[RMDB]
RNA sequence: GGGAACGACUCGAGUAGAGUCGAAAAGACUUGGAAUUCUGGAGAGUUGUCUUUAUGAAAAACUGGUUAUAAUUUUCUUUAAAUCCCAUCUCUUAGUUUUCCCUUUUGUUAUAUUUCGGGGAACAUCCUAAACUAUUGAGUUCGCUCAAUAGUUUAGAAAAGAAACAACAACAACAAC
Reactivity to 2A3 in 0.01 (KOAc 150mM, MgCl2 10mM, bicine 150mM(pH8.5), 24C), signal-to-noise 8, nucleotides 027 to 126: g010a010c050u110u130g060g120a080a110u200u020c030u080g040g010a010g010a020g040u050u110g000u030c000u020u040u030a090u070g030a030a010a000a020a060c110u110g080g030u120u090a120u070a210a190u110u060u050u030c030u040u120u080a040a080a080u020c010c000c000a040u020c000u000c000u050u060a040g030u040u030u050u080c010c000c020u060u080u060u100g130u180u050a140u020a070u190u100u130c030g000g010g000g000a000a010c010a050u060c000
Reactivity to DMS in 0.01 (KOAc 150mM, MgCl2 10mM, bicine 150mM(pH8.5), 24C), signal-to-noise 4, nucleotides 027 to 126: g010a040c030u010u010g000g020a090a100u020u010c070u010g010g000a030g000a050g010u010u020g010u010c010u000u010u020a030u020g000a080a050a030a060a070c060u020g010g000u030u020a090u030a080a070u010u000u010u010c010u030u010u020a050a040a120u000c000c000c000a060u020c070u000c020u010u010a090g010u010u010u010u010c000c000c030u000u000u010u010g000u000u020a080u020a100u010u000u010c130g000g000g000g000a020a030c080a070u030c110
This 177-nucleotide RNA was probed chemically with 2A3 and DMS. The data come from the RNA Mapping Database (RMDB), libraries RFM100 and RFMREP. Conditions: 150 mM KOAc, 10 mM MgCl2 and 150 mM bicine (pH 8.5), 24 C.